[RMDB]
RNA sequence: GGGAACGACUCGAGUAGAGUCGAAAAGAAAGUGCUGGCCCAUUAUGGCGUAGUUGUGUGAUCGUACAUGAUGGAACGACACACGUCUGUGCGAAAAAGCGUGACACUAAAUGUGUCGUAGCACGAAGGGAAUACAUUAGUUCGCUAAUGUAUUCCCAAAAGAAACAACAACAACAAC
Reactivity to 2A3 in 0.01 (KOAc 150mM, MgCl2 10mM, bicine 150mM(pH8.5), 24C), signal-to-noise 9, nucleotides 027 to 126: g040a010a060a000g030u020g020c010u040g040g090c030c010c010a020u160u130a150u160g110g000c030g020u040a030g040u060u120g010u020g010u010g050a270u060c000g010u020a050c040a070u230g070a090u200g180g060a060a040c010g010a000c000a000c000a000c000g000u000c010u020g040u030g000c020g080a110a070a010a000a000g090c100g070u130g020a000c000a000c020u150a170a120a090u210g000u000g000u010c010g010u050a000g010c010a010c020g010a080a070
Reactivity to DMS in 0.01 (KOAc 150mM, MgCl2 10mM, bicine 150mM(pH8.5), 24C), signal-to-noise 5, nucleotides 027 to 126: g000a100a110a150g000u000g010c000u000g000g000c030c000c020a140u030u020a050u020g010g000c020g010u000a020g010u000u010g010u000g020u000g020a150u010c000g000u000a080c030a120u030g010a140u020g000g010a160a030c010g000a030c000a010c010a010c000g000u010c020u010g000u010g010c000g000a040a080a080a100a130g020c120g020u030g000a020c010a030c040u010a070a120a070u030g020u000g000u000c010g010u010a060g000c010a010c030g000a110a120

Record summary:
Structure probing data (2A3 and DMS) for a 177-nucleotide construct. For 2A3, 9,996 sequencing reads were counted. For 2A3 the reverse transcriptase was SuperScript II with manganese. DMS adducts were read by reverse transcription with MarathonRT.